[RMDB]
RNA sequence: GGGAACGACUCGAGUAGAGUCGAAAAGUUCUCGAGGGCCUUCCUUCUGCGGUGAUCCUCCCUCUCCUUGUCGGUGAACCCGCUCUUGUGAGGCCUCUUCCCAGGUCCGGAGUCGACCUCCAUCUGAGUGAUUACAGUACUUCGGUACUGUAAUCACAAAAGAAACAACAACAACAAC
Reactivity to DMS in 0.01 (KOAc 150mM, MgCl2 10mM, bicine 150mM(pH8.5), 24C), signal-to-noise 1, nucleotides 027 to 126: g020u000u010c010u010c000g040a050g010g000g000c030c000u010u030c150c010u000u000c050u000g010c000g030g000u000g000a130u000c020c030u020c040c030c040u000c030u000c060c070u000u000g000u010c110g000g030u000g000a080a170c300c000c010g030c010u000c020u010u000g030u000g000a060g000g000c010c000u000c040u000u000c000c010c000a070g010g000u000c040c090g000g000a010g000u010c030g000a090c020c000u000c060c040a130u010c050u000g010a300